This 207-nucleotide RNA was probed chemically with 2A3. 2A3 adducts were read by reverse transcription with SuperScript II with manganese. The RNA was probed in 150 mM KOAc, 10 mM MgCl2 and 150 mM bicine (pH 8.5) at 24 C. It was measured as part of the RMDB library M2RFOK.
[RMDB]
RNA sequence: GGGAACGACUCGAGUAGAGUCGAAAAAACGUUGCAUGAUCGUAAAACAUGCCCGGCUUACCGUGAGCCGCCUUUGAUAGAAAGGUUUACACGGACUCUGUUGCGUUACGCACGUACCUAACUUGUGAAAACGGCAUCUUGUUCGCAAGAUGCCGAAGAACAUCCCUUGCUUCGGCAAGGGAUGUUCAAAAGAAACAACAACAACAAC
Reactivity to 2A3 in 0.01 (KOAc 150mM, MgCl2 10mM, bicine 150mM(pH8.5), 24C), signal-to-noise 1, nucleotides 027 to 156: a000a000c000g000u000u000g000c000a000u010g030a010u090c030g060u130a150a150a000a000c000a000u000g020c000c000c010g000g000c000u020u050a060c010c000g010u050g030a010g000c000c000g050c000c010u060u030u040g190a210u290a060g030a000a000a000g020g040u000u020u060a000c010a000c010g040g040a090c070u230c060u220g000u030u060g000c010g010u000u040a120c180g040c020a020c020g000u060a090c000c090u140a170a270c050u170u200g050u030g090a000a050a050a000c000g000g000c000a000u000c010u000u000g020u080u110c150g060c120a000a000g010a000u000g020c000c000g000a000a000